[RMDB]
RNA sequence: GGGAACGACUCGAGUAGAGUCGAAAAGAAGCUGUGAGGAAUGCCGCAUGGACCGAAGCUAUGUGCUCCAUCUUAACGUGGUGGUAUUGAUACUACGUUUCGGACCAGGCUUCAUUCCCCUCAGCAAGCGCGACUUACCAUUCGUGGUAAGUCGCGCAAAAGAAACAACAACAACAAC
Reactivity to 2A3 in 0.01 (KOAc 150mM, MgCl2 10mM, bicine 150mM(pH8.5), 24C), signal-to-noise 1, nucleotides 027 to 126: g110a070a020g000c030u030g070u070g020a000g000g050a000a000u000g110c050c000g050c020a010u090g020g000a060c000c000g120a000a000g000c000u030a030u170g000u010g000c000u020c000c000a030u000c070u290u280a200a130c080g160u110g000g010u000g010g000u000a100u110u160g080a000u000a000c000u000a000c020g000u100u000u060c000g000g000a020c000c000a000g000g000c000u000u000c000a000u050u000c000c000c000c040u070c000a000g000c000a040a040
Background
An RNA of 177 nucleotides, treated with 2A3 and read out base by base. The reactions ran in a buffer of 150 mM KOAc, 10 mM MgCl2 and 150 mM bicine (pH 8.5), at 24 C. Values cover nucleotides 27 to 126.